[RMDB]
RNA sequence: GGGAACGACUCGAGUAGAGUCGAAAAGAUAUGGAUUCCUUUGAUCAUAUAGUAAGCUGCAGUCGGAAACGACUGGCAGUAUCUAUAUGGGAGGAAUCCUAAGUCAAAAGUCACGUUCGCGUGACAACUUCUUUACAGCGUUCGCGCUGUAAAGAAGAAAAGAAACAACAACAACAAC
Reactivity to 2A3 in 0.01 (KOAc 150mM, MgCl2 10mM, bicine 150mM(pH8.5), 24C), signal-to-noise 2, nucleotides 027 to 126: g010a000u130a070u170g010g000a000u000u060c000c000u290u160u000g150a150u110c000a000u040a000u000a040g110u140a300a120g000c010u020g000c000a000g020u050c000g030g030a100a080a150c020g000a000c010u040g100g000c010a000g000u000a000u000c000u000a000u000a000u000g020g030g010a030g000g000a000a000u000c000c000u000a050a010g060u020c040a030a060a100a180g010u010c010a000c010g010u120u130c300g020c010g100u020g000a000c000a000a010
Reactivity to DMS in 0.01 (KOAc 150mM, MgCl2 10mM, bicine 150mM(pH8.5), 24C), signal-to-noise 2, nucleotides 027 to 126: g010a060u010a300u020g000g000a060u000u000c000c000u030u000u000g010a050u000c010a020u000a000u000a000g000u010a080a200g000c010u010g000c010a050g040u000c020g000g000a140a170a220c020g010a010c000u010g020g030c000a000g010u000a040u000c000u020a020u010a000u000g000g000g000a020g040g000a010a030u000c000c000u000a010a080g040u000c050a080a140a090a150g010u000c000a000c010g000u000u010c180g020c000g010u010g000a020c000a040a090